Notes: This 207-nucleotide RNA was probed chemically with 2A3. Reactivities are given for positions 27 through 156. The 2A3 profile rests on 881 reads.

[RMDB]
RNA sequence: GGGAACGACUCGAGUAGAGUCGAAAAGAAAUCUCAAUCUGCCAAAUGACAAGGACUCAAAUGCAGUGAGUCAAACAGCUGUUCAACCUGCUUUGUGCCUAGAGGCAUCCAAUUCCUGGCCAGUUUGGCCUGAGGAUAUGGGAGUAGGGAGUGCAGACCUAGCACGAGUAUUCGUACUCGUGCUAGGAAAAGAAACAACAACAACAAC
Reactivity to 2A3 in 0.01 (KOAc 150mM, MgCl2 10mM, bicine 150mM(pH8.5), 24C), signal-to-noise 2, nucleotides 027 to 156: g010a010a040a000u040c020u010c100a080a100u020c000u040g000c020c050a100a140a170u130g010a070c080a100a040g110g000a080c010u020c020a090a100a060u120g040c040a040g050u020g040a010g000u000c010a050a100a040c070a020g050c030u080g060u100u070c060a070a030c000c000u040g020c000u130u060u260g090u040g000c000c010u190a140g000a230g230g010c020a010u060c000c020a010a040u050u010c000c000u000g020g000c000c000a230g050u090u260u200g040g030c000c000u000g050a010g010g010a000u060a140u110g020g040g000a000g010u000a000g000g000g000a020g040u130g010c010a000g020a000